[RMDB]
RNA sequence: GGGAACGACUCGAGUAGAGUCGAAAAGGGAAAGUGAUGCAUCGAUGAGGAGACUGUUGUAGAGCACCUCGGCAGGGUACUUCUUUUCGAGUAUGUCAUACUCGCCGUAUUCCAGGGCCAGGGCAUAGUCAUAACCCGAAUUCGUUCGGGUUAUGACAAAAGAAACAACAACAACAAC
Reactivity to 2A3 in 0.01 (KOAc 150mM, MgCl2 10mM, bicine 150mM(pH8.5), 24C), signal-to-noise 2, nucleotides 027 to 126: g060g000g040a100a020a100g040u060g010a050u090g000c030a070u050c050g050a060u070g030a010g020g000a010g050a030c050u010g040u120u010g070u170a030g000a020g090c060a120c040c000u040c020g000g000c020a030g100g030g010u060a070c010u060u110c030u130u170u040u060c000g000a010g040u050a030u110g170u090c060a020u020a070c020u030c030g090c020c030g040u050a120u090u060c020c010a000g010g070g000c030c010a030g010g000g000c030a090u030a000
Reactivity to DMS in 0.01 (KOAc 150mM, MgCl2 10mM, bicine 150mM(pH8.5), 24C), signal-to-noise 3, nucleotides 027 to 126: g010g000g040a080a030a060g020u010g000a090u010g010c130a110u000c040g000a060u010g020a050g010g010a040g000a130c080u000g020u000u000g000u000a080g020a140g000c140a100c060c010u000c070g010g010c030a070g010g000g030u000a060c040u000u000c040u010u000u010u010c050g000a040g020u000a030u010g000u000c140a110u000a110c050u000c050g010c190c080g000u000a080u000u000c020c030a110g010g030g000c040c040a070g000g010g020c090a100u000a020
The record gives the reactivity of an RNA of 177 nucleotides to 2A3 and DMS. For 2A3, 1,638 sequencing reads were counted. Values cover nucleotides 27 to 126. Conditions: 150 mM KOAc, 10 mM MgCl2 and 150 mM bicine (pH 8.5), 24 C.